[RMDB]
RNA sequence: GGGAACGACUCGAGUAGAGUCGAAAAGAUAUGGAUCCCUAACUUCGACGAUCUCACAGUAUAUCGGAAACGAUAUAUCACAGGGGAGAAGGUGGGAUCCUAAGUCAAAGUGCUCUUCGGAGCACAAGAAGAUAGGAAAGUUCGCUUUCCUAUCUUCAAAAGAAACAACAACAACAAC
Reactivity to DMS in 0.01 (KOAc 150mM, MgCl2 10mM, bicine 150mM(pH8.5), 24C), signal-to-noise 9, nucleotides 027 to 126: g000a030u000a270u000g010g010a010u000c000c000c000u000a140a150c010u000u000c010g000a150c260g000a070u000c010u000c050a090c300a270g010u000a010u000a000u000c000g010g000a080a070a140c000g010a010u000a000u000a000u000c060a150c300a120g000g000g000g010a080g000a020a010g010g010u000g000g010g000a010u000c000c010u010a010a080g000u000c020a070a080a120g010u000g010c000u000c000u000u010c160g030g000a010g000c000a010c000a030a070
Reactivity to 2A3 in 0.01 (KOAc 150mM, MgCl2 10mM, bicine 150mM(pH8.5), 24C), signal-to-noise 9, nucleotides 027 to 126: g020a010u040a020u080g000g010a000u010c000c000c040u070a300a300c020u030u020c020g300a300c040g060a190u040c060u040c060a070c020a090g160u030a000u000a000u020c000g010g010a020a030a020c010g000a000u000a000u010a010u080c030a070c100a160g010g030g010g000a080g010a010a000g030g010u040g000g010g000a000u000c000c000u000a040a000g000u000c020a050a100a050g020u010g000c010u000c000u050u120c300g140g000a010g000c000a000c000a000a020
Notes
An RNA of 177 nucleotides, treated with DMS and 2A3 and read out base by base. The 2A3 profile rests on 32,185 reads. Source: RMDB library TTRDEL, as collected in RNAgym. 2A3 adducts were read by reverse transcription with SuperScript II with manganese. DMS adducts were read by reverse transcription with MarathonRT. The DMS profile rests on 13,173 reads. Conditions: 150 mM KOAc, 10 mM MgCl2 and 150 mM bicine (pH 8.5), 24 C.